This 207-nucleotide RNA was probed chemically with 2A3. Source: RMDB library VIROID, as collected in RNAgym.
RNA sequence: GGGAACGACUCGAGUAGAGUCGAAAAAAGAAGGAGCCGUUCCACGCACGACGCGAACAAGAAGAAGCCGAAGCAACUUGAGGUCGCCGCGCACGAACUGGCGCUCGAUCUCCGCCUCGCUCGAGUAGGUUUCCCCGGGGAUCGGUCUUCGAGCCCUGUCUGAUAACUGGUUCGCCAGUUAUCAGACAAAAGAAACAACAACAACAAC
Reactivity to 2A3 in 0.01 (KOAc 150mM, MgCl2 10mM, bicine 150mM(pH8.5), 24C), signal-to-noise 4, nucleotides 027 to 156: a010a010g080a040a020g060g050a010g020c010c010g020u010u000c030c030a020c080g010c000a050c040g120a040c080g080c020g120a160a020c030a050a020g220a080a020g090a080a000g080c070c120g180a130a020g050c050a040a100c010u030u030g020a030g150g070u060c010g000c070c030g000c010g010c010a070c140g040a080a030c100u270g040g000c010g020c040u010c010g090a100u020c000u020c020c000g000c000c000u000c000g000c000u000c000g010a000g010u020a050g150g040u020u040u050c000c010c010c010g000g000g000g000a030u040c010g000g140u080c100u250u230c080g010a020g030c010c000c010u010